[RMDB]
RNA sequence: GGGAACGACUCGAGUAGAGUCGAAAACUCAAAAUGCACAUUAUCCUCGUCCGGUAAGGUAGAGUGGAGUGAAAGUGUGGCGCGGUAUAUCGCUUACAUGAUUGCGAUGACAUGUGUGCGCGUUGCCACUCGCAGCGCGCUUCGGCGCGCUGCGAGUAAAAGAAACAACAACAACAAC
Reactivity to 2A3 in 0.01 (KOAc 150mM, MgCl2 10mM, bicine 150mM(pH8.5), 24C), signal-to-noise 1, nucleotides 027 to 126: c000u030c000a000a000a210a000u240g000c000a000c030a000u150u170a300u290c090c140u030c090g010u010c030c000g210g050u170a070a010g000g010u090a030g000a110g200u200g130g130a000g040u300g180a040a040a040g000u000g000u010g010g000c000g000c010g000g100u000a170u130a010u160c030g130c000u000u040a140c140a100u300g000a230u300u000g010c060g010a000u040g030a100c000a010u210g060u010g000u000g010c000g000c000g090u000u040g000c000c000